[RMDB]
RNA sequence: GGGAACGACUCGAGUAGAGUCGAAAAUCAACCACCUGGUCGUAGCCGUAGACCUCGGCGGCAGCAGCGCCGAGGAGGCACAGGCAGCCGUCGUCGUCCUUCAGGUAGCCAUUGGCGUUGCGACCGUGCUCGAUGAGCUGGUCCUUGACGCCGAUGAAGUUAAAUUCUAUUUCGAUAGAAUUUAACUAAAAGAAACAACAACAACAAC
Reactivity to 2A3 in 0.01 (KOAc 150mM, MgCl2 10mM, bicine 150mM(pH8.5), 24C), signal-to-noise 3, nucleotides 027 to 156: u070c010a020a060c010c010a030c000c020u040g060g060u090c070g120u130a040g020c030c020g040u040a010g020a050c000c000u000c000g000g010c010g040g000c020a030g020c020a020g060c020g010c000c000g030a060g060g100a030g000g020c010a020c040a100g120g010c000a020g010c010c000g040u020c000g010u010c010g000u000c020c020u060u130c030a050g000g030u050a040g040c040c000a020u010u020g000g000c000g010u000u030g020c040g030a000c000c000g060u040g000c000u000c020g300a300u300g000a010g000c000u010g000g000u000c000c010u030u160g010a000c000g000c000c000g000a010u030g030a010
Reactivity to DMS in 0.01 (KOAc 150mM, MgCl2 10mM, bicine 150mM(pH8.5), 24C), signal-to-noise 1, nucleotides 027 to 156: u000c030a080a170c030c020a070c060c030u000g040g060u000c050g000u010a180g030c030c070g000u000a070g000a070c020c020u000c010g050g020c000g000g000c050a120g010c050a300g010c030g010c020c000g020a160g000g010a080g020g010c000a060c030a060g060g020c020a090g020c020c010g010u000c020g010u000c050g010u000c010c030u010u000c050a150g010g020u000a080g020c070c010a100u000u000g000g010c000g030u010u000g010c300g000a030c000c000g000u000g030c000u000c030g000a240u000g010a080g020c020u000g000g000u010c000c020u010u000g010a010c050g030c010c000g010a030u000g010a130
Notes
Chemical mapping of a 207-nucleotide RNA with 2A3 and DMS. For 2A3 the reverse transcriptase was SuperScript II with manganese. For DMS, 2,944 sequencing reads were counted. Source: RMDB library OK3TST, as collected in RNAgym.